[RMDB]
RNA sequence: GGGAACGACUCGAGUAGAGUCGAAAACGCGGAAAAGCAUUGAAGUCUGCGACUAUUGAAAAUUGCGAUCAAACGAUUAUGGAACUCUCUCUCCAUCCGCAAAGCGUUUACGAGUAUUGGAGUGCUCAGGCAUCUAUCUUUUCGAAGAUAGAUGCCUAAAAGAAACAACAACAACAAC
Reactivity to DMS in 0.01 (KOAc 150mM, MgCl2 10mM, bicine 150mM(pH8.5), 24C), signal-to-noise 2, nucleotides 027 to 126: c080g030c020g010g000a010a040a110a160g000c060a020u010u000g020a080a120g020u000c010u000g060c080g000a110c040u040a140u000u000g000a100a020a060a100u000u020g010c000g010a110u000c090a110a060a050c110g000a040u000u000a100u010g010g000a040a090c070u000c050u000c040u000c070u000c000c000a040u000c120c030g000c070a060a080a140g000c090g010u000u010u000a050c080g010a020g010u000a050u000u040g010g010a060g030u000g010c010u000c060
Reactivity to 2A3 in 0.01 (KOAc 150mM, MgCl2 10mM, bicine 150mM(pH8.5), 24C), signal-to-noise 1, nucleotides 027 to 126: c040g010c060g010g030a000a040a130a000g050c130a080u070u120g070a090a030g080u030c080u090g060c000g000a060c020u150a140u240u190g020a130a050a050a080u110u080g010c020g030a070u020c020a050a090a090c040g060a050u130u030a090u270g000g020a000a040c000u030c010u040c010u010c010u000c070c000a040u000c020c040g120c020a000a070a000g050c070g000u020u050u030a070c060g000a000g010u000a070u070u170g130g000a120g040u020g000c020u040c040